[RMDB]
RNA sequence: GGGAACGACUCGAGUAGAGUCGAAAAGGUGAUAGAGCUGGCACAGGAGAUGACACCUCCAAUGGUGGCUAUUUAUGACAGCAUCACUGAUCUGCUAGAUGUGUGCAUAAAGCACCUGAAGCGGUCCAGUAUUACCGCGAUUCGUCGCGGUAAUACUAAAAGAAACAACAACAACAAC
Reactivity to 2A3 in 0.01 (KOAc 150mM, MgCl2 10mM, bicine 150mM(pH8.5), 24C), signal-to-noise 1, nucleotides 027 to 126: g030g000u040g000a070u090a300g300a090g130c000u010g050g000c040a010c000a070g010g060a080g030a050u100g010a010c020a030c020c000u060c100c120a050a070u210g030g040u010g000g010c020u050a060u030u050u000a090u060g030a020c000a030g000c000a020u000c010a000c010u050g000a080u090c010u060g070c000u060a010g000a200u040g260u030g020u000g050c020a020u140a260a260a080g000c000a010c000c000u000g020a030a000g020c000g010g000u010c010c000
Reactivity to DMS in 0.01 (KOAc 150mM, MgCl2 10mM, bicine 150mM(pH8.5), 24C), signal-to-noise 3, nucleotides 027 to 126: g000g010u000g000a010u000a160g010a230g010c000u000g010g000c030a040c100a080g000g030a020g000a200u010g010a070c050a040c010c010u010c180c300a080a060u000g000g020u000g010g020c030u000a100u000u000u000a030u000g000a040c010a040g010c000a050u010c010a020c020u000g010a070u000c030u000g000c030u010a070g000a120u000g010u010g010u000g020c000a110u000a050a110a260g000c010a000c000c000u000g000a300a020g000c030g000g000u000c010c080